Record summary:
Structure probing data (DMS and 2A3) for a 177-nucleotide construct. For 2A3, 14,589 sequencing reads were counted.
[RMDB]
RNA sequence: GGGAACGACUCGAGUAGAGUCGAAAAACGCAACCAGCUCAAUCGCCUCUGCUUUAAACAUAAAACACCGCUGGUUUCCGGUGCGGCGAUUCGUAUGGAAGGCCAAGUGAGCGUGUUUACGUAUCAACUGAAAAUGAUAUUUCGAUAUCAUUUUCAGAAAAGAAACAACAACAACAAC
Reactivity to DMS in 0.01 (KOAc 150mM, MgCl2 10mM, bicine 150mM(pH8.5), 24C), signal-to-noise 9, nucleotides 027 to 126: a080c120g010c080a070a090c080c050a100g010c030u000c070a070a090u000c120g000c040c010u000c090u010g000c060u000u000u000a080a070a120c070a040u000a050a080a090a100c020a020c020c020g020c050u000g010g000u000u000u000c050c010g020g040u000g010c030g000g020c110g010a090u000u010c070g020u010a060u000g010g010a050a050g000g020c010c050a050a110g020u000g000a090g020c070g010u000g010u000u000u000a040c090g010u000a090u000c080a090a190
Reactivity to 2A3 in 0.01 (KOAc 150mM, MgCl2 10mM, bicine 150mM(pH8.5), 24C), signal-to-noise 2, nucleotides 027 to 126: a000c040g000c020a030a080c040c030a050g010c020u020c050a050a070u030c030g000c010c010u040c030u040g040c010u120u110u130a090a130a010c040a060u140a110a120a020a010c020a010c010c010g000c030u040g000g000u010u020u010c020c010g000g040u050g000c020g030g000c030g120a110u160u100c030g020u030a050u060g050g010a040a030g060g000c010c010a140a050g040u060g040a040g020c070g020u020g040u050u100u060a030c030g040u070a060u290c030a040a090